[RMDB]
RNA sequence: GGGAACGACUCGAGUAGAGUCGAAAAGAUAUGGAUGUAUCGAAUCUGGCGAACAGUCUCGGAAACGAGACGGGAUGACGAAGUACUGUCCUAAGUCGAACCAGUCUUACGUUCGCGUAAGACUGAACUACGGUCAUGCGUUCGCGCAUGACCGUAGAAAAGAAACAACAACAACAAC
Reactivity to 2A3 in 0.01 (KOAc 150mM, MgCl2 10mM, bicine 150mM(pH8.5), 24C), signal-to-noise 1, nucleotides 027 to 126: g010a020u050a030u210g090g000a050u040g080u090a010u080c050g010a050a130u060c070u130g300g040c240g000a120a130c090a100g000u000c000u000c030g060g000a180a080a000c020g000a000g000a010c020g020g010g010a070u040g030a040c000g050a070a010g140u050a050c110u110g030u010c040c020u070a300a040g070u020c050g020a080a030c070c000a010g040u000c010u000u000a020c020g000u030u070c300g000c000g100u000a010a010g000a000c000u030g000a050a010
Reactivity to DMS in 0.01 (KOAc 150mM, MgCl2 10mM, bicine 150mM(pH8.5), 24C), signal-to-noise 1, nucleotides 027 to 126: g000a060u000a300u030g020g000a060u030g010u010a010u000c000g030a120a120u000c020u000g030g000c050g000a170a070c100a120g020u000c000u000c000g000g000a080a050a300c000g000a000g010a020c030g010g000g040a060u010g000a080c030g030a150a080g020u000a020c040u030g000u000c030c020u000a060a070g010u000c000g000a160a300c070c000a020g000u000c010u000u000a030c000g030u000u000c250g000c000g020u020a000a000g000a010c010u000g020a040a030